[RMDB]
RNA sequence: GGGAACGACUCGAGUAGAGUCGAAAACGACGACUGGCCCUCGCCAUGCACGCCGGUCAUCACUGCGUCCAGCCGAGCACCGCGCAAUAACCGCACCAGCAGUGGUUCACGCAAGGUGGCGCCACGCAUAGCAUCUAUUGUUCGCAAUAGAUGCUAUAAAAGAAACAACAACAACAAC
Reactivity to 2A3 in 0.01 (KOAc 150mM, MgCl2 10mM, bicine 150mM(pH8.5), 24C), signal-to-noise 7, nucleotides 027 to 126: c040g070a010c050g010a020c020u020g030g000c020c010c030u050c060g040c040c030a110u160g030c080a030c090g020c010c000g020g020u020c010a010u060c010a010c050u070g010c000g040u020c030c030a020g000c010c020g030a030g060c010a010c030c010g000c010g000c020a000a070u100a110a010c020c020g010c030a070c070c040a070g110c030a020g030u010g020g030u030u030c060a020c070g020c060a080a040g100g000u010g000g020c050g000c020c010a020c010g050c010
Reactivity to DMS in 0.01 (KOAc 150mM, MgCl2 10mM, bicine 150mM(pH8.5), 24C), signal-to-noise 9, nucleotides 027 to 126: c120g000a070c060g000a050c030u000g010g010c020c070c080u000c100g010c040c060a080u010g010c070a100c150g000c020c010g010g010u000c030a060u000c050a110c090u000g000c040g010u000c060c090a120g010c040c040g010a100g010c040a050c040c030g020c200g010c040a150a100u000a060a060c050c020g010c040a100c080c070a090g010c100a080g020u000g010g000u000u000c130a080c140g000c070a060a160g010g010u000g000g010c060g000c030c040a040c080g010c110

Notes
This 177-nucleotide RNA was probed chemically with 2A3 and DMS. For 2A3 the reverse transcriptase was SuperScript II with manganese. DMS adducts were read by reverse transcription with MarathonRT.